Description: Structure probing data (DMS and 2A3) for a 177-nucleotide construct.
RNA sequence: GGGAACGACUCGAGUAGAGUCGAAAACCCAGAGCCUUCGGGCUCUGGGACGCAACCGUCACAACGGCUUCCUGGCGUGACGGGGUUAACCCCAACGGAGCACAGUCCUGAUGGUUCGCCAUCAGGAGUAAUAUGUCGUAUUCGUACGACAUAUUACAAAAGAAACAACAACAACAAC
Reactivity to DMS in 0.01 (KOAc 150mM, MgCl2 10mM, bicine 150mM(pH8.5), 24C), signal-to-noise 8, nucleotides 027 to 126: c000c000c000a000g010a010g030c010c000u010u010c180g060g030g020c000u010c000u000g020g010g020a020c180g010c160a100a120c000c010g000u000c020a010c020a080a300c060g000g000c100u000u000c040c020u000g000g010c300g010u000g010a010c000g000g010g000g010u000u000a090a100c120c000c010c140a060a090c160g010g010a040g020c040a170c250a130g000u000c000c000u000g000a010u000g010g010u000u010c240g020c000c000a000u000c000a010g000g000a030
Reactivity to 2A3 in 0.01 (KOAc 150mM, MgCl2 10mM, bicine 150mM(pH8.5), 24C), signal-to-noise 9, nucleotides 027 to 126: c010c000c000a000g000a000g010c110c260u290u300c300g050g000g000c000u000c000u000g000g010g010a020c040g040c050a030a060c000c000g000u010c000a010c010a050a040c050g050g010c020u270u150c020c030u070g050g010c020g010u000g000a010c000g000g010g000g000u150u170a110a110c010c000c000c010a050a060c090g030g010a010g010c020a020c030a100g130u000c000c000u000g000a010u010g020g060u040u050c220g040c070c000a000u000c000a000g000g000a000
For DMS, 9,853 sequencing reads were counted. 2A3 adducts were read by reverse transcription with SuperScript II with manganese. DMS adducts were read by reverse transcription with MarathonRT. The reactions ran in a buffer of 150 mM KOAc, 10 mM MgCl2 and 150 mM bicine (pH 8.5), at 24 C.